This 177-nucleotide RNA was probed chemically with DMS and 2A3.
RNA sequence: GGGAACGACUCGAGUAGAGUCGAAAAGAAACUUCUGGCCUCUCACCUGCUUAUGCACCAACAUAUGUUAGUGUUGAUGACAAGUAUAAGACGAGUGAUGAGCUUUGCGUGAAUCUUAAUUUACCCGGGAUGAUACUACGUUCGCGUAGUAUCAUCCAAAAGAAACAACAACAACAAC
Reactivity to DMS in 0.01 (KOAc 150mM, MgCl2 10mM, bicine 150mM(pH8.5), 24C), signal-to-noise 1, nucleotides 027 to 126: g000a050a070a160c070u010u000c060u000g000g010c070c010u000c070u000c030a020c010c010u010g010c000u010u000a020u010g020c000a090c040c000a000a000c010a010u000a080u000g000u000u000a130g010u000g040u000u000g000a190u000g000a180c210a060a080g000u010a050u000a010a000g000a150c060g010a120g010u010g010a020u040g040a060g030c050u000u000u040g040c300g010u020g000a020a100u000c010u000u000a090a090u020u010u000a130c020c010c010g030
Reactivity to 2A3 in 0.01 (KOAc 150mM, MgCl2 10mM, bicine 150mM(pH8.5), 24C), signal-to-noise 2, nucleotides 027 to 126: g000a020a050a010c010u060u040c020u070g080g010c000c020u030c000u000c000a020c000c000u020g000c000u020u010a000u020g030c020a030c000c020a000a000c010a010u020a030u210g240u200u180a140g010u050g020u000u000g020a100u050g010a030c050a160a030g020u000a010u000a020a040g060a090c020g030a020g040u000g030a050u140g010a010g000c010u070u150u070g040c040g020u030g030a030a050u060c010u050u060a170a140u150u100u140a150c020c000c010g000

The RNA was probed in 150 mM KOAc, 10 mM MgCl2 and 150 mM bicine (pH 8.5) at 24 C.